An RNA of 177 nucleotides, treated with DMS and 2A3 and read out base by base. For DMS, 818 sequencing reads were counted. It was measured as part of the RMDB library OK2TST.
RNA sequence: GGGAACGACUCGAGUAGAGUCGAAAAGCAAAUAUCACGAUUUUCGAUAGCAUCCUGCAGCCGAUGAUGCGGUGACUGGAUACGGCGCAAAAUACGCAGCACAAACAUCGCUGCCAGCAGGCCAAUAUGAUUAUCGACCUUUCGAGGUCGAUAAUCAAAAAGAAACAACAACAACAAC
Reactivity to DMS in 0.01 (KOAc 150mM, MgCl2 10mM, bicine 150mM(pH8.5), 24C), signal-to-noise 2, nucleotides 027 to 126: g010c090a150a080a200u000a050u000c030a090c120g010a150u020u020u070u000c060g010a060u000a060g010c000a150u000c060c010u010g020c060a160g030c070c030g000a070u010g010a060u010g010c080g010g020u000g000a060c140u000g000g020a110u010a100c100g000g000c000g030c060a070a030a020a110u000a060c090g000c030a060g000c060a060c070a070a060a170c060a050u000c080g020c010u010g000c010c080a060g020c100a050g000g000c160c070a120a060u010a060
Reactivity to 2A3 in 0.01 (KOAc 150mM, MgCl2 10mM, bicine 150mM(pH8.5), 24C), signal-to-noise 1, nucleotides 027 to 126: g080c040a070a040a070u210a000u030c030a010c170g110a090u220u040u020u170c070g010a020u100a120g000c000a030u050c000c000u000g020c010a020g000c030c050g020a020u080g010a030u120g060c000g110g030u030g090a070c020u000g030g020a080u080a180c000g000g060c060g040c080a100a090a030a000u200a070c070g010c020a030g010c030a110c020a060a180a070c010a070u080c010g020c010u030g000c050c000a010g000c000a010g040g000c000c000a000a010u180a080